The record gives the reactivity of an RNA of 177 nucleotides to 2A3 and DMS. It was measured as part of the RMDB library M2PK90. The reactions ran in a buffer of 150 mM KOAc, 10 mM MgCl2 and 150 mM bicine (pH 8.5), at 24 C.

RNA sequence: GGGAACGACUCGAGUAGAGUCGAAAAAAUAAGAGUUUGGAUUAACCUAUAGGGAAUUAGCGAACAAGAAUACAACCUAAGGACCUGGUUGACUUAAUUAUUCCAUAGGUUGGUGGAAGCUAGCGAACGCGAUUCUAUUAUUCGUAAUAGAAUCGCGAAAAGAAACAACAACAACAAC
Reactivity to 2A3 in 0.01 (KOAc 150mM, MgCl2 10mM, bicine 150mM(pH8.5), 24C), signal-to-noise 1, nucleotides 027 to 126: a020a020u300a120a000g040a040g000u040u060u150g150g040a010u000u000a010a030c000c020u020a020u140a140g130g040g000a070a080u090u040a050g090c020g080a060a000c040a030a010g060a070a030u050a090c000a000a000c000c040u040a120a000g150g020a050c000c140u080g050g000u040u090g020a050c000u000u000a050a070u210u040a020u030u070c010c000a000u000a080g000g000u000u000g050g030u070g090g090a020a000g020c020u070a020g080c000g070a060a000
Reactivity to DMS in 0.01 (KOAc 150mM, MgCl2 10mM, bicine 150mM(pH8.5), 24C), signal-to-noise 3, nucleotides 027 to 126: a070a050u000a050a100g010a050g010u010u000u000g010g010a100u000u010a070a050c020c000u000a060u000a190g020g010g010a070a080u020u000a040g020c050g020a040a050c090a030a070g000a110a090u020a130c010a010a020c010c010u020a060a140g000g010a110c300c190u010g030g010u000u000g000a060c050u000u000a010a040u020u000a050u000u010c010c000a050u000a010g010g010u000u000g000g010u000g000g020a050a080g000c050u000a040g030c130g010a070a100